[RMDB]
Source information
The data come from the RNA Mapping Database (RMDB), library OK2TRN. Chemical mapping of a 177-nucleotide RNA with 2A3 and DMS. The reactions ran in a buffer of 150 mM KOAc, 10 mM MgCl2 and 150 mM bicine (pH 8.5), at 24 C. For 2A3, 8,497 sequencing reads were counted.

RNA sequence: GGGAACGACUCGAGUAGAGUCGAAAACUGACAUUGGCUGGUCCUGGAGCGAUGGCUGUCAGCUGGCUGACAUAUCCCCAGGUGAACAAAUACGUGGUCAGGUUUGGAGCCUCCCCUGGGCAGUACAGCGAUCAUUAAUAUUCGUAUUAAUGAUCGCAAAAGAAACAACAACAACAAC
Reactivity to 2A3 in 0.01 (KOAc 150mM, MgCl2 10mM, bicine 150mM(pH8.5), 24C), signal-to-noise 5, nucleotides 027 to 126: c010u010g050a030c020a140u130u120g060g010c050u040g050g050u070c000c010u030g020g010a100g020c140g020a030u110g080g030c060u050g080u110c010a010g010c040u060g150g000c000u020g060a020c010a040u090a050u050c020c010c020c000a020g050g050u080g090a090a030c020a040a120a030u180a070c100g050u060g000g060u030c030a020g020g010u020u070u080g060g010a040g020c020c010u010c010c000c000c000u030g010g000g000c010a020g030u110a060c040a040
Reactivity to DMS in 0.01 (KOAc 150mM, MgCl2 10mM, bicine 150mM(pH8.5), 24C), signal-to-noise 6, nucleotides 027 to 126: c030u000g000a070c100a100u010u010g010g010c070u000g010g010u000c010c010u000g010g010a070g030c170g010a030u010g020g010c100u000g010u010c010a040g020c110u000g010g010c020u000g010a060c040a080u010a070u000c010c020c000c030a070g000g010u010g010a080a070c110a050a070a100u020a080c140g010u000g010g010u000c030a030g000g010u000u000u000g000g010a160g010c020c020u000c030c010c010c020u000g010g010g010c060a070g010u000a060c170a150
The DMS profile rests on 8,913 reads.